[RMDB]
RNA sequence: GGGAACGACUCGAGUAGAGUCGAAAAUGUUUGCAAUUCGUUGCAAACAAACUACCGAGAACGUUGCUCGGUAUAAACAGCGAACCCUUGGAAACAAGCGAACUAUGGAACGCUUCGGCGUUCCAAAUCUAUUUGAUCAAUUCGUUGAUCAAAUAGAAAAAGAAACAACAACAACAAC
Reactivity to DMS in 0.01 (KOAc 150mM, MgCl2 10mM, bicine 150mM(pH8.5), 24C), signal-to-noise 5, nucleotides 027 to 126: u000g000u000u000u000g010c010a010a040u010u010c150g020u000u000g000c000a010a010a010c010a030a080a130c130u000a070c000c000g000a020g000a130a160c200g020u000u010g000c000u010c000g000g010u000a020u000a040a090a090c120a080g010c070g000a100a120c070c040c010u000u000g000g000a130a100a140c060a040a060g000c140g000a070a080c140u010a130u000g010g000a010a010c000g010c000u000u010c160g030g000c000g010u000u000c000c000a010a030a040
Reactivity to 2A3 in 0.01 (KOAc 150mM, MgCl2 10mM, bicine 150mM(pH8.5), 24C), signal-to-noise 3, nucleotides 027 to 126: u040g000u000u000u020g000c000a010a010u050u080c210g060u060u020g000c000a000a000a010c000a000a070a000c030u010a010c010c000g010a000g010a070a080c080g060u080u150g020c010u000c010g020g000u010a010u030a020a040a010c030a010g030c020g060a050a030c000c010c000u010u050g070g040a090a070a010c020a070a040g030c050g100a040a030c040u060a160u130g000g000a010a000c010g000c000u040u040c180g070g000c000g010u000u020c000c000a000a000a000